[RMDB]
RNA sequence: GGGAACGACUCGAGUAGAGUCGAAAAGUGAAUAUGCGCUCCAGCGCACCUUUGUGUCAAUGUUUGGAAAGUUUUUCUGUAACUACAGAGGCAGUAUACAGAUUACCGCCUGGGCAGCUGUGACAGCAAGCUGAGCAUGGUUCGCCAUGCUCAGCUUAAAAGAAACAACAACAACAAC
Reactivity to DMS in 0.01 (KOAc 150mM, MgCl2 10mM, bicine 150mM(pH8.5), 24C), signal-to-noise 2, nucleotides 027 to 126: g010u010g000a120a100u020a090u010g000c010g020c020u020c200c150a240g020c050g020c040a060c100c000u000u020u000g040u000g000u000c080a130a060u000g020u000u000u020g020g010a060a170a110g000u000u000u000u000u010c000u000g000u000a030a030c050u000a040c030a090g000a090g000g000c020a000g020u000a110u000a150c060a060g010a060u000u020a040c050c040g010c300c010u000g030g000g000c020a050g020c070u010g010u020g040a040c070a100g000c080